[RMDB]
RNA sequence: GGGAACGACUCGAGUAGAGUCGAAAAACCGGCGGGCGCCUUCCAGCAUCGGGGUGCGGACGCCCUUGGCAGGCUUCGGCCGUCCGGCGCGCGAUUAACGACCAACUUAGAACUGGUACGGACAAGGGAAUACGUGCAAAUUCGUUUGCACGUAUUCAAAAGAAACAACAACAACAAC
Reactivity to DMS in 0.01 (KOAc 150mM, MgCl2 10mM, bicine 150mM(pH8.5), 24C), signal-to-noise 5, nucleotides 027 to 126: a150c040c010g000g010c030g000g020g000c040g000c030c010u010u000c020c020a080g010c090a070u050c110g020g000g010g010u000g010c050g000g010a040c090g010c020c020c020u010u020g020g000c090a070g010g000c060u010u010c080g000g010c020c020g010u000c030c030g010g010c030g000c040g000c030g010a120u000u020a070a110c060g010a090c010c020a060a040c050u020u060a110g010a100a140c070u000g000g020u000a090c020g000g000a100c160a120a100g000g000
Reactivity to 2A3 in 0.01 (KOAc 150mM, MgCl2 10mM, bicine 150mM(pH8.5), 24C), signal-to-noise 6, nucleotides 027 to 126: a000c000c000g000g010c020g010g020g040c020g010c000c000u060u030c010c020a020g020c020a120u130c090g010g010g010g000u080g050c060g070g040a020c030g020c000c000c000u020u040g020g000c060a050g000g000c000u100u090c110g080g000c030c010g040u040c010c010g010g010c010g000c000g000c010g060a080u100u110a110a030c010g010a020c010c010a020a040c050u120u180a040g020a090a030c030u020g010g030u130a140c030g020g030a040c050a090a070g140g000